[RMDB]
RNA sequence: GGGAACGACUCGAGUAGAGUCGAAAAGAAAAUACACGAAAAGAAAAAGUGGGCUGCUCGAAAAGUCGCUCGGCGAGCAGCGGGAAAGGGAUUUAGGGAGGGAUUUAACACGAGCGACGGAAAGAAAGGGUUACAAAUACUUCGGUAUUUGUAACCCAAAAGAAACAACAACAACAAC
Reactivity to 2A3 in 0.01 (KOAc 150mM, MgCl2 10mM, bicine 150mM(pH8.5), 24C), signal-to-noise 1, nucleotides 027 to 126: g100a000a160a000a000u180a060c060a020c120g150a050a070a000a020g190a010a220a000a000a000g000u060g060g000g020c060u000g000c120u000c000g000a060a030a030a030g010u000c040g000c000u000c000g000g000c000g000a000g040c010a000g000c000g000g010g020a050a040a040g070g000g030a060u100u170u220a040g050g180g000a260g030g000g000a000u080u000u300a180a040c180a000c000g000a000g020c000g000a000c010g000g130a260a060a040g060a070a000a000
Structure probing data (2A3) for a 177-nucleotide construct. For 2A3 the reverse transcriptase was SuperScript II with manganese. The reactions ran in a buffer of 150 mM KOAc, 10 mM MgCl2 and 150 mM bicine (pH 8.5), at 24 C. It was measured as part of the RMDB library OK1LIB. Values cover nucleotides 27 to 126. The 2A3 profile rests on 428 reads.